[RMDB]
RNA sequence: GGGAACGACUCGAGUAGAGUCGAAAAUUACGUGAGCCACCGAAGUUGUAACCUAGUACAUCAGACUUCUGAGGUACACGAGCAUCAGCUACGUCAGUGACGUACUCAAAGAAGUUACCAUUGGCAUCCUCGAAGGGUUCAUCAAGCUUGUAGACGAUGAUGAAUUUACAUUCGUGUAAAUUCAUCAAAAAGAAACAACAACAACAAC
Reactivity to 2A3 in 0.01 (KOAc 150mM, MgCl2 10mM, bicine 150mM(pH8.5), 24C), signal-to-noise 6, nucleotides 027 to 156: u140u070a020c050g020u040g020a020g020c000c010a040c030c020g040a060a030g010u050u030g030u050a030a040c010c020u030a070g060u070a070c010a070u050c040a060g100a170c070u130u060c010u160g020a030g020g030u050a020c040a030c050g040a030g000c020a080u160c050a020g010c060u070a090c080g030u040c040a130g040u020g090a010c060g020u020a010c020u020c070a170a200a120g110a120a000g030u070u050a020c020c020a050u010u030g010g000c000a040u070c010c010u000c010g020a060a060g060g000g010u030u010c010a020u060c010a040a050g010c040u050u050g020u060a040g040a120c070g060a080
Reactivity to DMS in 0.01 (KOAc 150mM, MgCl2 10mM, bicine 150mM(pH8.5), 24C), signal-to-noise 3, nucleotides 027 to 156: u000u010a090c020g030u000g020a110g020c010c020a150c000c030g020a090a160g010u000u000g010u000a090a130c070c030u010a160g020u000a000c020a020u010c010a080g010a230c140u010u000c010u030g000a060g050g050u000a020c040a140c100g000a160g000c000a150u000c070a090g000c020u010a050c060g030u000c040a120g010u020g030a030c010g020u010a020c010u000c060a060a130a140g010a100a070g020u000u000a060c020c020a200u020u000g010g020c050a150u000c040c010u000c030g000a080a090g000g020g000u000u020c050a060u010c080a040a110g010c050u020u000g020u000a110g010a150c090g000a230